Conditions: 150 mM KOAc, 10 mM MgCl2 and 150 mM bicine (pH 8.5), 24 C. Chemical mapping of a 177-nucleotide RNA with 2A3 and DMS.
RNA sequence: GGGAACGACUCGAGUAGAGUCGAAAAGCGCGGGCAUCCCGGACCUCGAAGAAGCCGUCGAGCUGAUCGACGAACUCAACGACAUCGGAAUCAGCCACGUGGUGUUCAAGCCCGGCACCAUCGAGCACUGGGGAUUAAAUUUCGAUUUAAUCCCCAGAAAAGAAACAACAACAACAAC
Reactivity to 2A3 in 0.01 (KOAc 150mM, MgCl2 10mM, bicine 150mM(pH8.5), 24C), signal-to-noise 4, nucleotides 027 to 126: g060c130g000c040g030g010g000c010a060u090c000c000c000g010g020a090c030c030u050c020g060a120a040g030a070a000g060c020c010g000u020c010g000a010g000c020u020g100a080u030c030g030a030c010g010a060a070c050u060c090a100a060c060g090a010c020a090u050c020g010g020a020a030u060c010a020g000c010c000a030c040g000u020g010g010u040g060u020u060c050a070a030g020c000c000c000g000g000c000a020c010c000a040u170c040g020a010g030c040a010
Reactivity to DMS in 0.01 (KOAc 150mM, MgCl2 10mM, bicine 150mM(pH8.5), 24C), signal-to-noise 3, nucleotides 027 to 126: g010c060g010c050g000g000g010c020a070u020c010c000c000g000g020a130c130c140u000c010g000a100a160g010a090a090g020c120c000g000u040c010g000a300g020c090u030g000a070u030c020g000a110c040g000a130a140c100u000c080a060a160c170g010a050c110a050u030c030g030g000a140a070u020c040a060g000c000c030a060c060g010u020g000g010u010g000u000u000c050a110a110g000c010c020c000g000g000c050a080c060c020a040u030c000g000a080g000c180a240